[RMDB]
RNA sequence: GGGAACGACUCGAGUAGAGUCGAAAAUGGAUCUGCAACAACACCAUAUAUCCGCAGAUCCUAAGGAUGUAUGGACAACUGAUCCGAGAGGAUCUACAUUAAGGCGAAGGUCAAAUCUUCGUUAAUACCGACCUGAAGCCGAAGGUAUUAACGAACACAGGAUACUAGCUUUCGAGCUAGUAUCCUGAAAAGAAACAACAACAACAAC
Reactivity to 2A3 in 0.01 (KOAc 150mM, MgCl2 10mM, bicine 150mM(pH8.5), 24C), signal-to-noise 4, nucleotides 027 to 156: u140g010g000a010u020c020u070g070c050a110a080c020a050a060c020a130c080c070a040u060a020u010a030u070c000c040g000c020a020g000a040u000c010c000u040a100a020g000g010a010u020g000u030a000u000g000g030a040c030a080a070c120u070g000a020u010c000c000g010a030g000a020g030g010a010u020c020u040a070c040a170u120u160a090a060g040g000c040g050a040a010g010g010u030c030a050a010a230u100c120u050u020c040g000u000u000a000a010u000a000c010c000g020a020c000c040u090g070a070a010g050c050c000g000a000a010g000g000u000a000u010u000a010a000c010g010a030a030c150a000
Reactivity to DMS in 0.01 (KOAc 150mM, MgCl2 10mM, bicine 150mM(pH8.5), 24C), signal-to-noise 1, nucleotides 027 to 156: u010g000g000a030u000c000u000g010c040a200a210c050a050a120c130a200c010c050a050u000a120u000a010u010c000c060g000c140a070g030a040u030c000c000u000a050a090g000g030a040u000g050u020a050u010g000g000a150c010a080a060c050u020g000a070u000c010c000g020a210g000a300g030g010a050u010c050u000a120c140a070u000u010a070a140g000g000c010g010a200a090g020g010u040c000a030a090a070u000c000u040u000c000g010u000u000a000a050u000a010c040c000g000a200c000c050u000g000a030a130g040c110c010g050a040a170g010g000u000a020u000u000a010a000c010g050a010a010c130a130
Overview:
Conditions: 150 mM KOAc, 10 mM MgCl2 and 150 mM bicine (pH 8.5), 24 C. Chemical mapping of a 207-nucleotide RNA with 2A3 and DMS. 2A3 adducts were read by reverse transcription with SuperScript II with manganese. It was measured as part of the RMDB library OK3TST.